[RMDB]
RNA sequence: GGGAACGACUCGAGUAGAGUCGAAAAUUGAAGGUAAAACAGCCUGUGGGUGAAACUCACCCACAGGGCCCAUUGGGCGCUAGCACUCUGGUAUCACGGUACCUUUGUGCGCCUGUUUUACCGAAGGAGGGGCCACUGUUCGCAGUGGCCAAAAGAAACAACAACAACAAC
Reactivity to 2A3 in 0.01 (KOAc 150mM, MgCl2 10mM, bicine 150mM(pH8.5), 24C), signal-to-noise 1, nucleotides 027 to 129: u070u090g050a070a020g030g000u030a000a000a000a000c000a010g000c010c010u020g000u000g000g000g000u000g050a150a010a070c060u010c010a000c000c000c000a000c000a000g000g000g010c000c000c000a000u190u300g010g000g000c030g000c040u070a050g010c020a000c000u020c000u000g000g050u000a000u000c020a030c210g200g030u000a000c000c000u000u020u020g000u000g020c030g000c000c000u000g000u000u000u000u000a000c000c010g000a010a000g020g050a000g000g010
Reactivity to DMS in 0.01 (KOAc 150mM, MgCl2 10mM, bicine 150mM(pH8.5), 24C), signal-to-noise 2, nucleotides 027 to 129: u080u010g030a200a150g000g030u040a000a090a000a000c020a000g010c000c000u000g070u010g060g020g040u030g000a050a110a110c240u000c030a000c040c020c010a020c010a120g010g000g100c110c010c000a000u030u140g030g000g000c050g020c010u060a030g100c010a020c010u040c000u050g030g020u030a000u040c060a110c120g030g000u000a010c000c000u070u030u000g010u000g000c030g000c040c040u020g000u030u030u000u000a020c030c010g040a010a110g010g010a120g110g050

The data come from the RNA Mapping Database (RMDB), library 15KLIB. An RNA of 170 nucleotides, treated with 2A3 and DMS and read out base by base. The RNA was probed in 150 mM KOAc, 10 mM MgCl2 and 150 mM bicine (pH 8.5) at 24 C.